The record gives the reactivity of an RNA of 177 nucleotides to DMS and 2A3. For DMS the reverse transcriptase was MarathonRT. The RNA was probed in 150 mM KOAc, 10 mM MgCl2 and 150 mM bicine (pH 8.5) at 24 C. 2A3 adducts were read by reverse transcription with SuperScript II with manganese. Reactivities are given for positions 27 through 126.

RNA sequence: GGGAACGACUCGAGUAGAGUCGAAAAAUGGGGAUGCAUGCUUACACUGCUAUGAUAGACAUAAUAAACUCCAUAUCUAUCCAGACUCCUAAGUUCCUCUCUUGGAUGAGGAUGGAUAGGAUGGAACGUUUCAGUAUGCAUUCGUGCAUACUGAAACAAAAGAAACAACAACAACAAC
Reactivity to DMS in 0.01 (KOAc 150mM, MgCl2 10mM, bicine 150mM(pH8.5), 24C), signal-to-noise 3, nucleotides 027 to 126: a100u000g000g000g010g010a070u010g030c040a040u000g020c010u000u000a060c160a100c100u010g020c060u010a070u000g010a120u010a130g000a130c090a050u000a060a070u020a080a140a130c140u010c000c000a010u000a070u000c000u000a010u000c000c000a010g000a120c020u000c000c070u000a000a020g000u010u000c080c090u020c160u010c030u000u000g010g030a150u020g010a010g010g030a150u010g000g000a000u000a000g000g000a000u000g000g010a030a060c180
Reactivity to 2A3 in 0.01 (KOAc 150mM, MgCl2 10mM, bicine 150mM(pH8.5), 24C), signal-to-noise 3, nucleotides 027 to 126: a000u130g020g010g000g000a020u080g000c020a010u050g010c000u050u040a030c090a020c080u060g000c010u070a030u170g050a060u090a080g160a040c050a050u190a120a060u120a090a250a050c030u020c010c010a000u070a210u000c000u000a000u000c000c000a000g030a040c010u010c010c000u040a050a040g040u070u070c040c040u090c030u010c020u030u050g090g000a140u140g010a050g010g000a010u000g000g000a010u010a010g000g010a000u010g020g000a040a010c050
In probing experiments dimethyl sulfate is read out at A N1 and C N3, which are open when not base-paired.